Record summary:
The record gives the reactivity of an RNA of 177 nucleotides to DMS and 2A3. 2A3 adducts were read by reverse transcription with SuperScript II with manganese. DMS (dimethyl sulfate) methylates the pairing face of unpaired adenines and cytosines. The data come from the RNA Mapping Database (RMDB), library OK2TST. The RNA was probed in 150 mM KOAc, 10 mM MgCl2 and 150 mM bicine (pH 8.5) at 24 C. For DMS, 20,350 sequencing reads were counted.

RNA sequence: GGGAACGACUCGAGUAGAGUCGAAAAAGUUCAUGGGAUAAGAGAUUCGGCGUUACACCGAGAUGGGAGAUUAUGACGCAGAGACGUCGGUUUGCUCUGAUUCAACCGCUUGGUAAUCGCUGAGCGAAUUUACGAAAAUGUUCGCAUUUUCGUAAAUAAAAGAAACAACAACAACAAC
Reactivity to DMS in 0.01 (KOAc 150mM, MgCl2 10mM, bicine 150mM(pH8.5), 24C), signal-to-noise 9, nucleotides 027 to 126: a100g010u010u010c050a070u010g010g000g000a120u010a060a080g000a120g010a150u000u000c010g000g010c010g010u000u000a120c190a060c010c000g010a020g000a060u010g010g000g000a260g010a050u000u010a060u010g010a050c150g020c010a050g010a070g010a070c080g010u000c160g010g010u000u010u000g010c010u000c010u000g000a050u000u000c030a040a250c050c000g000c010u000u010g010g010u010a080a090u000c040g010c010u000g000a010g010c080g010a090
Reactivity to 2A3 in 0.01 (KOAc 150mM, MgCl2 10mM, bicine 150mM(pH8.5), 24C), signal-to-noise 6, nucleotides 027 to 126: a000g090u090u060c060a070u160g030g070g050a060u100a180a060g040a030g020a230u030u020c000g010g000c020g020u040u040a050c060a010c070c020g010a010g010a100u150g010g040g010a060g010a020u060u070a100u300g030a030c080g010c050a000g010a000g020a090c050g060u140c080g040g060u080u130u090g020c010u010c010u020g040a060u040u030c000a030a030c010c000g000c030u000u020g000g010u030a050a050u050c030g000c010u020g010a000g010c000g010a040